Structure probing data (DMS and 2A3) for a 177-nucleotide construct.
2A3 adducts were read by reverse transcription with SuperScript II with manganese.
In probing experiments dimethyl sulfate is read out at A N1 and C N3, which are open when not base-paired.
Conditions: 150 mM KOAc, 10 mM MgCl2 and 150 mM bicine (pH 8.5), 24 C.
RNA sequence: GGGAACGACUCGAGUAGAGUCGAAAAGGUCUUGAGGGAUCUAGGGGCAGACAGAACAGUCGGUGGAGCGGUGAAAUGCGUAGAGAUCGACUGGAAUGCCGAUGGCGAAGGCGGUCUGCUGGGGAUCUCAAAUACCUAAUUUCGAUUAGGUAUUUGAAAAAGAAACAACAACAACAAC
Reactivity to DMS in 0.01 (KOAc 150mM, MgCl2 10mM, bicine 150mM(pH8.5), 24C), signal-to-noise 9, nucleotides 027 to 126: g010g010u010c040u000u010g020a170g010g000g010a030u010c040u010a140g010g010g010g000c010a020g010a020c020a130g010a120a200c010a020g010u000c000g010g010u000g000g010a100g010c000g000g010u010g020a100a130a110u050g000c010g010u010a110g010a300g000a020u000c000g000a020c000u000g000g010a070a160u020g010c010c000g000a120u020g010g010c140g010a110a150g000g000c020g010g010u000c010u000g010c020u000g010g010g000g000a060u010c050
Reactivity to 2A3 in 0.01 (KOAc 150mM, MgCl2 10mM, bicine 150mM(pH8.5), 24C), signal-to-noise 9, nucleotides 027 to 126: g040g010u040c030u100u120g050a150g010g040g020a020u020c030u070a050g150g000g030g000c000a000g010a020c010a010g090a140a020c010a000g000u010c010g000g010u010g020g040a040g020c010g030g020u120g090a100a090a060u220g010c020g050u220a030g000a000g000a050u010c000g010a010c000u000g010g050a080a060u140g000c010c010g070a110u150g070g050c120g040a060a030g020g000c020g010g010u000c010u000g000c000u010g000g000g020g020a030u010c010